[RMDB]
RNA sequence: GGGAACGACUCGAGUAGAGUCGAAAAACAGCGAAAGGCACAAGACUUCGAACAAUAUAGCAGUUAGUAGUUGCCUAAACCCAUUGCAAUAUAUGGGACAGUAGAGGUCGCAAGCCUAUACUGUGCGAAAAGUCGCAAGGUUUCGACCUUGCGACAAACUAACUACAGGGUUCGCCCUGUAGUUAGUAAAAGAAACAACAACAACAAC
Reactivity to 2A3 in 0.01 (KOAc 150mM, MgCl2 10mM, bicine 150mM(pH8.5), 24C), signal-to-noise 6, nucleotides 027 to 156: a000c020a010g030c020g050a150a070a050g010g020c020a010c010a060a070g060a050c030u060u060c110g070a100a040c070a210a070u210a030u120a240g070c070a020g010u040u140a040g020u080a030g000u090u070g010c010c000u050a100a050a050c000c000c000a000u000u020g000c010a030a010u020a000u010a010u160g000g000g010a010c000a000g000u010a000g000a000g020g010u110c040g040c170a040a010g000c000c000u000a000u010a000c000u000g000u010g010c010g050a030a030a040a110g000u000c000g000c010a000a010g020g000u020u060u130c170g010a070c000c000u000u000g000c000g000a000c000a000a000
Reactivity to DMS in 0.01 (KOAc 150mM, MgCl2 10mM, bicine 150mM(pH8.5), 24C), signal-to-noise 3, nucleotides 027 to 156: a070c050a100g020c020g040a120a050a090g020g020c030a130c100a140a140g000a050c020u000u000c020g000a170a070c050a090a130u000a140u000a100g010c080a060g020u000u000a100g020u000a120g000u000u000g010c010c020u000a050a100a190c000c000c000a030u000u000g010c060a160a160u010a100u010a020u000g020g020g010a090c020a050g010u010a070g000a040g070g010u000c030g030c230a120a260g010c010c000u000a060u000a010c010u000g000u000g000c080g000a080a060a090a120g040u000c010g000c010a020a000g020g000u000u000u000c240g030a070c000c010u000u000g000c000g000a010c000a000a020